Chemical mapping of a 177-nucleotide RNA with DMS and 2A3. The DMS profile rests on 18,384 reads. It was measured as part of the RMDB library TTRDES. 2A3 adducts were read by reverse transcription with SuperScript II with manganese.
RNA sequence: GGGAACGACUCGAGUAGAGUCGAAAAGAUAUGGAAUUCUCGAUGAACUACGACGACGGCUCGGAAACGAGCCCAAGUCGCAUCGAGGAAUUCCUAAGUCAAAGUUACCCAGUUCGCUGGGUAACAACUAACUAACAUAGUUCGCUAUGUUAGUUAGAAAAGAAACAACAACAACAAC
Reactivity to DMS in 0.01 (KOAc 150mM, MgCl2 10mM, bicine 150mM(pH8.5), 24C), signal-to-noise 9, nucleotides 027 to 126: g010a070u010a300u010g000g010a020a020u000u000c000u000c000g000a030u000g010a160a080c180u010a300c030g000a010c000g000a300c300g000g000c010u000c000g000g000a060a090a230c000g000a010g010c000c000c010a010a300g000u000c000g010c020a010u000c000g000a040g020g010a030a010u000u000c000c000u010a030a120g010u000c050a090a060a150g000u000u000a010c000c000c000a010g000u000u010c260g030c000u000g010g000g000u000a000a000c000a070a190
Reactivity to 2A3 in 0.01 (KOAc 150mM, MgCl2 10mM, bicine 150mM(pH8.5), 24C), signal-to-noise 8, nucleotides 027 to 126: g010a010u090a040u180g000g000a010a010u020u000c010u010c020g010a010u030g040a230a240c210u190a100c300g010a000c000g010a010c020g000g010c010u000c000g010g020a070a070a030c010g010a000g000c000c000c000a010a000g000u000c010g000c000a010u000c000g010a110g000g070a010a020u010u000c000c000u010a070a010g020u010c080a220a050a050g000u010u000a000c000c000c000a010g010u060u090c300g020c160u000g000g000g000u000a000a000c000a000a000
Notes
The 2A3 profile rests on 43,448 reads.